[RMDB]
RNA sequence: GGGAACGACUCGAGUAGAGUCGAAAACCGAGGACGAGCAGCUGGCUAAAGGUCUGCAGAGAUUCCGGGACGCCAAUCAGCGCAGCAUGUCGGAGCGAUCACGGGCUUCAUCGCAAGCAGAUCGUUACAUAGUGGAGUAGUUCGCUACUCCACUAUGAAAAGAAACAACAACAACAAC
Reactivity to 2A3 in 0.01 (KOAc 150mM, MgCl2 10mM, bicine 150mM(pH8.5), 24C), signal-to-noise 5, nucleotides 027 to 126: c000c010g010a080g060g020a010c040g020a010g040c040a000g000c030u040g030g010c020u070a160a040a020g030g000u010c010u050g030c040a020g010a010g000a090u100u020c020c010g010g010g010a020c040g020c040c000a040a190u150c040a070g030c060g000c100a040g020c030a070u100g080u140c050g020g020a070g000c010g030a070u020c010a010c080g010g070g000c010u110u060c040a110u100c030g010c070a020a000g000c010a000g010a040u010c010g000u000u020a040
Reactivity to DMS in 0.01 (KOAc 150mM, MgCl2 10mM, bicine 150mM(pH8.5), 24C), signal-to-noise 9, nucleotides 027 to 126: c020c000g010a110g000g020a060c060g010a080g020c040a080g010c020u000g000g010c060u000a090a130a120g000g010u000c010u000g010c060a090g000a130g000a100u010u010c040c020g000g010g010a050c060g000c020c050a090a100u000c110a090g000c060g010c100a090g000c070a060u010g010u010c070g000g000a090g010c010g000a130u000c020a050c070g010g010g000c120u000u000c130a060u010c120g000c100a150a080g000c020a060g000a040u000c020g000u000u000a130
An RNA of 177 nucleotides, treated with 2A3 and DMS and read out base by base. As a SHAPE reagent, 2A3 marks flexible, mostly unpaired nucleotides at the ribose 2'-OH. Values are in units of 0.01, from 0 to 300, in steps of 10. The reactions ran in a buffer of 150 mM KOAc, 10 mM MgCl2 and 150 mM bicine (pH 8.5), at 24 C. For 2A3, 10,927 sequencing reads were counted. For DMS the reverse transcriptase was MarathonRT.